The record gives the reactivity of an RNA of 177 nucleotides to 2A3 and DMS. 2A3 adducts were read by reverse transcription with SuperScript II with manganese. For DMS, 24,619 sequencing reads were counted. The reactions ran in a buffer of 150 mM KOAc, 10 mM MgCl2 and 150 mM bicine (pH 8.5), at 24 C.
[RMDB]
RNA sequence: GGGAACGACUCGAGUAGAGUCGAAAACAGCAUGGUGCGGCGGCGUCCGGGUGGCACACCAUGAUCGACGAGCUCGUCGGUGUUCCAGCCGAACCCGACCCCGACGCUGACCCGGCCGUGCGACAAAACAUUAUCUUUAGUUCGCUAAAGAUAAUGUAAAAGAAACAACAACAACAAC
Reactivity to 2A3 in 0.01 (KOAc 150mM, MgCl2 10mM, bicine 150mM(pH8.5), 24C), signal-to-noise 8, nucleotides 027 to 126: c040a020g000c000a010u020g010g030u260g120c030g010g010c000g000g000c000g010u000c020c010g000g010g050u050g010g000c010a000c010a000c020c010a080u130g050a090u170c030g030a050c060g060a040g090c080u030c040g010u020c060g000g010u010g010u040u000c030c010a030g050c020c010g050a100a100c020c020c000g050a100c020c010c010c010g000a000c000g000c000u040g080a210c020c010c000g010g000c010c000g000u010g000c010g020a020c030a010a120a010
Reactivity to DMS in 0.01 (KOAc 150mM, MgCl2 10mM, bicine 150mM(pH8.5), 24C), signal-to-noise 9, nucleotides 027 to 126: c110a160g010c000a010u000g010g030u000g010c080g010g020c060g010g000c020g020u010c010c070g020g010g010u000g000g010c060a040c020a010c010c010a080u010g020a030u010c030g010a050c080g010a270g010c200u000c010g010u000c050g020g000u000g000u000u000c020c030a060g000c030c020g000a120a110c080c050c020g000a160c020c010c000c040g010a030c020g010c010u000g000a120c290c010c010g010g000c000c010g020u000g010c010g010a080c210a080a070a100